Conditions: 150 mM KOAc, 10 mM MgCl2 and 150 mM bicine (pH 8.5), 24 C. Chemical mapping of a 207-nucleotide RNA with DMS and 2A3. Reactivities are given for positions 27 through 156. Source: RMDB library M2RFPK, as collected in RNAgym. In probing experiments dimethyl sulfate is read out at A N1 and C N3, which are open when not base-paired.
[RMDB]
RNA sequence: GGGAACGACUCGAGUAGAGUCGAAAAAAUGCCGCCUCAGUUCCAAGCUCUUUCGUGCCACUGUAAACAGUCCUAUUGAGUUAGGGGCAGUCAACCACGUUGCGAAGCUAAAUUAUCUGGUCGAGAGUUACGAUUCCCUACUUCGGUAGGGAAUCAAGUUUACUAAUCGCUUCGGCGAUUAGUAAACAAAAGAAACAACAACAACAAC
Reactivity to DMS in 0.01 (KOAc 150mM, MgCl2 10mM, bicine 150mM(pH8.5), 24C), signal-to-noise 1, nucleotides 027 to 156: a070a060u010g040c030c000g030c000c020u000c030a170g020u000u000c020c070a100a220g000c030u000c020u000u000u000c030g040u000g010c030c040a050c000u010g000u010a050a070a080c050a110g000u000c000c030u000a110u010u020g010a180g020u010u000a070g010g010g030g040c010a040g020u000c040a050a080c050c050a050c040g030u000u010g000c030g010a080a120g000c020u000a040a040a060u010u000a080u000c040u010g080g000u010c000g030a070g000a100g010u010u020a110c090g000a020u000u000c010c010c000u000a020c030u000u000c300g080g030u000a010g000g030g010a010a010u000c000a020a120
Reactivity to 2A3 in 0.01 (KOAc 150mM, MgCl2 10mM, bicine 150mM(pH8.5), 24C), signal-to-noise 2, nucleotides 027 to 156: a000a020u060g030c000c020g040c000c040u020c030a040g000u110u070c010c010a070a010g010c000u000c000u040u040u050c000g030u020g010c020c020a030c010u040g000u090a070a150a070c020a030g030u050c010c010u060a080u090u060g060a060g150u050u070a040g000g000g030g000c000a000g040u050c020a010a050c040c020a020c080g000u030u050g030c070g010a060a020g000c000u080a040a120a080u120u090a090u100c080u060g040g020u040c030g000a000g000a010g150u090u050a060c110g010a000u010u000c020c000c000u000a010c000u000u040c030g060g000u000a000g000g000g020a000a000u000c000a000a000